[RMDB]
RNA sequence: GGGAACGACUCGAGUAGAGUCGAAAAUAGCGAUCUCUAAUGAGAUCGCGAGUCGAUCCAUCGAAGCGGCUCGACAGAUGGACGACAAGCGAGCCUACAGGAGUCGAGGAAAACUCGACUCCAAAAAGAUAUGGAUGGCUUUCGAGCCAUCCAUAUCAAAAGAAACAACAACAACAAC
Reactivity to DMS in 0.01 (KOAc 150mM, MgCl2 10mM, bicine 150mM(pH8.5), 24C), signal-to-noise 2, nucleotides 027 to 126: u050a190g000c020g010a000u020c000u000c000u000a070a140u060g000a000g000a010u000c000g040c040g000a010g000u000c000g040a120u000c000c000a010u000c030g030a150a240g030c080g000g010c070u020c030g030a100c090a200g000a020u000g000g000a010c030g000a030c030a130a100g000c180g000a120g010c000c000u000a120c120a240g040g000a000g010u010c000g000a030g000g000a090a060a070a200c000u010c000g010a020c000u020c000c000a000a000a090a110a030
Reactivity to 2A3 in 0.01 (KOAc 150mM, MgCl2 10mM, bicine 150mM(pH8.5), 24C), signal-to-noise 4, nucleotides 027 to 126: u190a010g010c000g000a000u010c000u020c030u090a200a270u300g000a000g010a010u000c000g000c000g000a010g000u000c000g020a270u000c010c000a000u010c000g060a080a010g080c090g070g030c100u050c080g050a020c030a020g030a010u010g000g000a000c000g010a000c000a000a010g080c030g020a020g010c000c010u130a100c080a140g010g000a000g000u000c020g000a000g000g070a080a210a170a110c000u000c000g000a000c000u000c000c000a010a000a000a000a010
Structure probing data (DMS and 2A3) for a 177-nucleotide construct. The RNA was probed in 150 mM KOAc, 10 mM MgCl2 and 150 mM bicine (pH 8.5) at 24 C. The DMS profile rests on 3,015 reads. 2A3 adducts were read by reverse transcription with SuperScript II with manganese. The data come from the RNA Mapping Database (RMDB), library OK1LIB.